[RMDB]
RNA sequence: GGGAACGACUCGAGUAGAGUCGAAAAGAUAUGGAUAGGGUGUGAAGGUCUAUAAUCUAUUCUCGGAAACGAGAAUAGGUAGACCCACACACCUAUCCUAAGUCAAACCCACCUGUUCGCAGGUGGGGGUGCCUAAUCGGUUCGCCGAUUAGGCACCAAAAGAAACAACAACAACAAC
Reactivity to DMS in 0.01 (KOAc 150mM, MgCl2 10mM, bicine 150mM(pH8.5), 24C), signal-to-noise 1, nucleotides 027 to 126: g000a090u000a300u000g000g010a040u000a020g000g000g140u000g000u000g000a250a220g050g000u000c000u000a190u000a300a070u000c000u000a000u000u000c000u000c020g040g000a060a070a200c010g010a010g000a000a000u000a000g050g050u000a000g000a020c060c000c060a050c000a000c000a020c020c010u000a000u000c000c010u020a070a220g000u000c040a040a240a300c000c000c000a090c000c000u000g010u000u010c220g030c000a000g000g000u050g000g000g000
Reactivity to 2A3 in 0.01 (KOAc 150mM, MgCl2 10mM, bicine 150mM(pH8.5), 24C), signal-to-noise 1, nucleotides 027 to 126: g050a010u040a030u100g010g000a000u000a000g050g020g050u000g010u020g150a290a090g000g010u030c020u020a150u070a260a240u080c000u030a000u000u000c000u020c040g000g060a090a060a060c020g000a000g000a010a030u000a000g020g000u000a000g000a010c000c050c000a000c010a000c000a000c000c000u000a000u000c000c000u010a020a000g000u040c040a160a000a150c010c010c000a010c030c020u050g050u060u190c300g000c190a010g000g000u010g000g000g000